[RMDB]
An RNA of 177 nucleotides, treated with DMS and 2A3 and read out base by base.
For DMS, 1,063 sequencing reads were counted.
RNA sequence: GGGAACGACUCGAGUAGAGUCGAAAACGUCGAAGAUGCGAACAUUCACGGCCUUGUCGUGAAGCCAUAGACGCACAGGGCGCGUUACCGCCUCGUGAUAUCUGUUGCUCCAAGGCAGACCGGCAGGUGUUCCUCAGAGCUUCGGCUCUGAGGAACAAAAAGAAACAACAACAACAAC
Reactivity to DMS in 0.01 (KOAc 150mM, MgCl2 10mM, bicine 150mM(pH8.5), 24C), signal-to-noise 2, nucleotides 027 to 126: c100g010u000c000g010a110a000g000a140u050g010c290g000a020a030c300a170u000u100c060a300c000g000g010c040c070u030u000g070u050c000g030u000g020a000a040g000c010c090a030u000a030g000a060c300g000c000a000c000a010g070g020g060c000g000c300g000u030u000a130c220c000g000c000c000u070c170g030u000g050a000u010a020u000c000u000g060u030u000g000c010u000c020c010a050a040g000g060c010a010g090a000c110c030g000g000c270a190g030g000
Reactivity to 2A3 in 0.01 (KOAc 150mM, MgCl2 10mM, bicine 150mM(pH8.5), 24C), signal-to-noise 3, nucleotides 027 to 126: c010g030u010c010g030a050a050g040a050u220g070c100g000a030a020c040a120u060u180c070a000c020g000g030c000c060u100u160g020u030c010g010u000g030a040a000g000c000c000a070u020a080g020a010c060g010c000a020c030a010g000g060g000c040g050c080g060u100u070a090c060c000g000c020c000u050c000g030u020g020a050u030a040u210c020u010g020u010u030g000c020u030c040c010a020a070g010g000c020a010g000a000c020c000g030g020c030a040g020g090
The reactions ran in a buffer of 150 mM KOAc, 10 mM MgCl2 and 150 mM bicine (pH 8.5), at 24 C. It was measured as part of the RMDB library OK1LIB.